[RMDB]
RNA sequence: GGGAACGACUCGAGUAGAGUCGAAAAGAUAUGGAGACCGCUGGACGUUUGACGCCACUCGGAAACGAGUGGCCGAGUCCAGAACUACGGUAACUCCUAAGUCAAAAGUUCGACUUCGGUCGAACAACUAGUACCAGUACUUCGGUACUGGUACUAGAAAAGAAACAACAACAACAAC
Reactivity to 2A3 in 0.01 (KOAc 150mM, MgCl2 10mM, bicine 150mM(pH8.5), 24C), signal-to-noise 2, nucleotides 027 to 126: g030a010u060a060u160g010g000a010g040a070c000c000g020c010u000g000g020a000c020g050u090u260u300g050a030c020g010c000c000a010c000u010c020g000g060a040a110a070c010g000a000g010u000g000g010c010c000g000a000g000u000c000c010a000g010a010a000c020u130a030c020g000g010u050a170a140c010u000c010c000u020a120a030g040u020c040a020a060a000a190g000u020u000c010g020a020c000u040u090c300g080g000u000c000g000a000a000c000a010a010
Reactivity to DMS in 0.01 (KOAc 150mM, MgCl2 10mM, bicine 150mM(pH8.5), 24C), signal-to-noise 4, nucleotides 027 to 126: g000a050u010a300u000g010g000a020g030a070c010c000g020c020u000g000g000a020c010g000u000u010u010g020a130c300g000c020c000a020c000u000c000g020g000a120a150a120c000g000a000g020u010g000g010c000c000g000a030g010u010c000c000a000g020a050a040c140u010a220c020g000g000u000a080a050c010u000c000c000u000a040a110g000u010c020a110a080a090a170g000u000u000c010g000a010c000u000u010c180g020g000u000c010g000a000a010c000a110a140
Conditions: 150 mM KOAc, 10 mM MgCl2 and 150 mM bicine (pH 8.5), 24 C. An RNA of 177 nucleotides, treated with 2A3 and DMS and read out base by base. DMS adducts were read by reverse transcription with MarathonRT. The 2A3 profile rests on 4,289 reads.